[RMDB]
RNA sequence: GGGAACGACUCGAGUAGAGUCGAAAAAGGUAUAGUGUGGGAAAAGGUGCCUUUCUCAUUCGUUGUCGACUGGCUCCUACCUGUAGGUAACAUGCUCGAGGGCCUUACGGCCCCCGUGGGAUGCUCCUACAUGUCAGGAACAGUUACUGACGUAAUAGGAUACGGGGAACUUCGGUUCCCCGUAUCCAAAAGAAACAACAACAACAAC
Reactivity to 2A3 in 0.01 (KOAc 150mM, MgCl2 10mM, bicine 150mM(pH8.5), 24C), signal-to-noise 1, nucleotides 027 to 156: a000g050g030u050a090u090a080g160u160g010u030g050g050g000a060a140a070a070g000g070u000g000c010c000u060u150u010c100u020c040a060u130u040c090g040u000u050g030u090c070g010a000c000u010g010g000c110u020c000c000u000a000c000c000u000g030u000a000g000g000u030a040a100c010a000u030g130c010u030c020g000a040g000g000g010c000c020u120u230a080c100g000g000c010c000c010c000c000g040u190g000g030g020a000u000g010c000u000c030c000u020a000c000a010u000g010u000c100a000g000g000a000a020c000a020g000u010u020a040c010u030g040a020c030g020u000a070a050u060a230